[RMDB]
Source: RMDB library M2PK50, as collected in RNAgym.
An RNA of 177 nucleotides, treated with DMS and 2A3 and read out base by base.
DMS adducts were read by reverse transcription with MarathonRT.
2A3 adducts were read by reverse transcription with SuperScript II with manganese.
The reactions ran in a buffer of 150 mM KOAc, 10 mM MgCl2 and 150 mM bicine (pH 8.5), at 24 C.
RNA sequence: GGGAACGACUCGAGUAGAGUCGAAAAUAGGUCGUGUUCGCACGACCUAAGAUAUAAUGCAUAAAAUGCCAGUAACCCGAAACACAAGGGAGUGCACCUGGCCUACGAUGUCGUUCGCGACAUCGAAGUCUCACGUGACAUUCGUGUCACGUGAGACAAAAGAAACAACAACAACAAC
Reactivity to DMS in 0.01 (KOAc 150mM, MgCl2 10mM, bicine 150mM(pH8.5), 24C), signal-to-noise 1, nucleotides 027 to 126: u000a020g000g010u000c000g000u000g010u000u090c060g010c010a010c000g000a000c000c000u000a000a000g010a060u000a100u000a090a060u010g000c010a100u010a090a060a050a200u000g000c040c010a030g010u000a110a170c000c000c020g010a140a100a160c120a060c220a110a120g000g000g030a130g000u000g000c030a180c130c000u000g040g000c090c140u000a030c000g000a010u000g000u000c000g050u000u010c180g000c020g000a010c000a000u000c010g000a020a040
Reactivity to 2A3 in 0.01 (KOAc 150mM, MgCl2 10mM, bicine 150mM(pH8.5), 24C), signal-to-noise 2, nucleotides 027 to 126: u060a000g000g000u000c010g000u000g030u010u050c160g000c050a000c000g000a000c000c000u000a000a000g000a000u050a020u000a110a110u080g000c000a010u140a220a230a050a010u110g000c020c000a020g000u070a160a150c000c000c020g060a100a260a000c120a020c070a170a050g020g000g030a070g060u070g050c010a010c030c010u000g000g060c000c010u040a070c010g010a000u000g000u000c000g040u000u050c240g000c010g060a000c020a010u010c010g020a080a010